[RMDB]
RNA sequence: GGGAACGACUCGAGUAGAGUCGAAAAGUUUUGAGGGACUAAUUCCUAGUUUCAUCAUCCAUGAGAUUGUAGAAGCUUUUGGAUUGUCUGACAUAAGAUGUCUAUGAAUAUGAUUUUUGCCAAAUUUAUCCACUAUCCUGGCUUCGAAUCCGAUAGACAGUGUUCUAUAUUUCGAUAUAGAACACUGAAAAGAAACAACAACAACAAC
Reactivity to DMS in 0.01 (KOAc 150mM, MgCl2 10mM, bicine 150mM(pH8.5), 24C), signal-to-noise 1, nucleotides 027 to 156: g020u000u000u000u010g010a160g000g010g040a100c050u010a090a130u000u000c020c040u010a110g020u000u000u000c030a110u000c060a120u010c040c030a110u010g000a090g010a060u010u000g020u000a230g010a050a180g030c000u010u000u000u000g000g000a060u000u000g020u000c020u020g020a040c010a060u010a010a100g000a280u000g010u000c040u000a200u010g010a090a140u000a090u000g000a090u000u000u000u000u000g020c040c030a040a050a050u000u010u000a060u010c010c020a060c170u000a100u000c080c060u000g010g010c040u000u000c060g000a100a110u000c010c020g010a130u000a100g000a170
Reactivity to 2A3 in 0.01 (KOAc 150mM, MgCl2 10mM, bicine 150mM(pH8.5), 24C), signal-to-noise 5, nucleotides 027 to 156: g020u050u090u180u230g090a080g020g060g010a000c020u040a040a130u080u040c000c010u020a040g010u010u020u020c040a100u010c000a010u010c080c030a100u110g030a060g040a250u060u130g060u140a080g020a050a010g020c000u090u210u220u180g000g000a000u030u030g030u010c110u060g010a020c020a040u140a060a140g110a230u070g030u000c020u070a060u120g070a120a040u130a090u180g050a090u040u070u100u190u190g090c030c040a120a070a010u060u100u100a070u070c070c020a010c040u020a020u010c000c010u020g000g000c000u010u000c010g010a040a020u010c030c020g050a060u030a070g050a020

Structure probing data (DMS and 2A3) for a 207-nucleotide construct. The reactions ran in a buffer of 150 mM KOAc, 10 mM MgCl2 and 150 mM bicine (pH 8.5), at 24 C. The data come from the RNA Mapping Database (RMDB), library OK3TST. For 2A3 the reverse transcriptase was SuperScript II with manganese.